[RMDB]
RNA sequence: GGGAACGACUCGAGUAGAGUCGAAAAACUAUCUACGGAUAGAAUAAUCAACUCCAUCGUGCAGAGGUUUGAGUGUCCUGUGUUUUGCCUAAUCGCAUUCAAUUUCUGAACGGUAGAGAUGGUACAACAAGAUGAAACUCUUCGGAGUUUCAUCUUGAAAAGAAACAACAACAACAAC
Reactivity to DMS in 0.01 (KOAc 150mM, MgCl2 10mM, bicine 150mM(pH8.5), 24C), signal-to-noise 3, nucleotides 027 to 126: a080c000u010a000u000c010u010a150c180g000g020a010u000a010g010a080a080u010a120a050u010c040a020a020c010u000c000c020a010u000c010g000u010g010c010a040g000a020g000g010u010u040u040g020a030g000u000g060u010c110c070u030g020u020g010u010u030u020u050g030c120c040u010a050a090u000c180g000c000a020u000u000c010a010a000u010u000u000c030u000g010a020a020c030g000g020u010a030g010a020g010a040u000g020g000u000a060c210a060a200
Reactivity to 2A3 in 0.01 (KOAc 150mM, MgCl2 10mM, bicine 150mM(pH8.5), 24C), signal-to-noise 5, nucleotides 027 to 126: a000c000u000a010u000c010u010a020c190g080g000a000u000a000g090a040a090u240a100a030u070c010a010a060c000u000c010c000a000u010c000g000u020g010c010a000g000a020g040g010u010u160u200g020a010g000u010g040u080c060c100u110g050u060g120u180u160u190u240g130c020c010u100a110a110u160c050g000c010a010u000u000c000a000a000u030u010u020c000u000g010a010a010c010g020g000u000a000g000a000g010a030u020g050g000u090a070c040a150a020
The record gives the reactivity of an RNA of 177 nucleotides to DMS and 2A3.
The reactions ran in a buffer of 150 mM KOAc, 10 mM MgCl2 and 150 mM bicine (pH 8.5), at 24 C.
The 2A3 profile rests on 3,008 reads.
The data come from the RNA Mapping Database (RMDB), libraries RFM100 and RFMREP.